[RMDB]
RNA sequence: GGGAACGACUCGAGUAGAGUCGAAAACAUUGGGCCAAAAACUGUCACCCAGCAACGAAUGAUGUAAAUUUACUAUUUAACGGAAGUGCAGAUAGCGGUUCAAACUAUAACGUAACUAAAACAACCAUUUUUUUUGCUGCAAGACAUGGGGAAGGUGGAGGCUUCUUGAAUUCGUUCAAGAAGCCUCAAAAGAAACAACAACAACAAC
Reactivity to 2A3 in 0.01 (KOAc 150mM, MgCl2 10mM, bicine 150mM(pH8.5), 24C), signal-to-noise 1, nucleotides 027 to 156: c000a050u060u040g000g000g000c070c000a060a110a030a080a190c050u010g170u160c040a050c010c050c000a080g040c080a100a020c030g050a030a060u030g060a050u100g180u070a110a220a180u090u160u090a190c080u140a130u060u200u000a100a000c090g000g020a070a070g100u040g000c010a000g000a090u120a090g060c000g080g000u050u000c080a000a000a120c080u120a050u160a300a030c140g000u000a010a000c000u050a300a110a050a050c040a020a030c030c000a010u000u000u000u000u000u060u220u130g050c010u000g000c040a120a060g030a090c040a140u100g000g000g040g040a050a050g050g000u060g040
Overview
Chemical mapping of a 207-nucleotide RNA with 2A3. It was measured as part of the RMDB library OK3TST. The 2A3 profile rests on 330 reads. High 2A3 reactivity points to a flexible backbone, as in loops and unpaired stretches. The reactions ran in a buffer of 150 mM KOAc, 10 mM MgCl2 and 150 mM bicine (pH 8.5), at 24 C.